[RMDB]
RNA sequence: GGGAACGACUCGAGUAGAGUCGAAAAGCUUGGGCGAGUGAGGGCAGGCAGAUCAGAACGGCGAUGAAUAACUUGAAUCUCAUACUGACCUGCAGCGGGAGUGGAUGAAUCCUGAUCAGGCAGCCACGGUACGUAAACUCUUCGGAGUUUACGUACCAAAAGAAACAACAACAACAAC
Reactivity to 2A3 in 0.01 (KOAc 150mM, MgCl2 10mM, bicine 150mM(pH8.5), 24C), signal-to-noise 3, nucleotides 027 to 126: g030c030u050u070g040g000g020c040g000a030g070u070g040a080g000g040g000c020a040g050g000c010a010g020a070u080c020a000g040a130a020c060g060g020c070g010a020u060g060a070a120u130a130a040c040u030u060g060a050a040u040c020u000c040a050u100a190c010u030g090a230c010c000u010g040c030a040g000c030g010g010g020a040g040u100g050g000a060u080g070a050a060u020c010c020u030g000a070u070c010a010g010g010c000a000g040c020c020a040c010
Reactivity to DMS in 0.01 (KOAc 150mM, MgCl2 10mM, bicine 150mM(pH8.5), 24C), signal-to-noise 3, nucleotides 027 to 126: g000c040u000u000g000g010g010c050g000a090g010u020g000a120g000g010g030c060a070g010g010c060a040g000a060u000c050a050g010a090a090c180g020g010c100g000a040u020g000a150a050u020a070a100c210u020u000g010a150a050u000c050u000c040a090u000a130c040u000g000a090c040c010u000g010c140a060g000c030g020g000g000a030g020u000g020g000a110u000g010a090a100u010c010c000u010g000a100u000c050a040g010g010c030a030g020c070c090a070c140
About this RNA
The record gives the reactivity of an RNA of 177 nucleotides to 2A3 and DMS. For DMS the reverse transcriptase was MarathonRT. For DMS, 2,655 sequencing reads were counted. The data come from the RNA Mapping Database (RMDB), library OK2TST. The RNA was probed in 150 mM KOAc, 10 mM MgCl2 and 150 mM bicine (pH 8.5) at 24 C.